[RMDB]
RNA sequence: GGGAACGACUCGAGUAGAGUCGAAAAACGGGUUGGCUCAUCCUGAGAUCGGGGAGCCUCGACGAUCUCUUUGAUCUCCUGAAGGAGGAAGGAGCUCUCGAGCGCUCUCCCGCCCCUCGGAUGGGCCGACAUUACUGAUGUUCGCAUCAGUAAUGUCAAAAGAAACAACAACAACAAC
Reactivity to DMS in 0.01 (KOAc 150mM, MgCl2 10mM, bicine 150mM(pH8.5), 24C), signal-to-noise 3, nucleotides 027 to 126: a110c080g020g010g000u010u010g020g000c000u000c000a020u000c000c010u000g010a010g000a130u070c020g000g010g010g010a010g000c010c000u000c010g020a020c220g000a010u000c000u010c000u010u000u000g010a160u010c010u000c000c010u000g020a140a170g010g000a030g010g000a090a010g000g000a020g000c100u000c010u000c010g000a020g010c200g010c000u000c000u010c010c000c000g010c120c180c120c000u000c030g000g000a010u010g010g000g010c010c010
Reactivity to 2A3 in 0.01 (KOAc 150mM, MgCl2 10mM, bicine 150mM(pH8.5), 24C), signal-to-noise 2, nucleotides 027 to 126: a000c110g040g060g050u140u180g030g020c000u010c000a000u000c010c060u130g000a000g020a040u040c000g000g000g030g000a010g000c040c010u010c000g000a000c100g000a010u020c010u000c000u040u030u070g200a240u070c000u050c010c000u250g170a300a130g040g000a000g000g000a010a000g020g000a000g000c000u000c000u000c010g010a010g000c130g010c000u000c060u050c010c000c000g010c010c020c000c010u000c000g000g000a000u010g000g010g010c000c000

This 177-nucleotide RNA was probed chemically with DMS and 2A3. The DMS profile rests on 4,317 reads. The RNA was probed in 150 mM KOAc, 10 mM MgCl2 and 150 mM bicine (pH 8.5) at 24 C.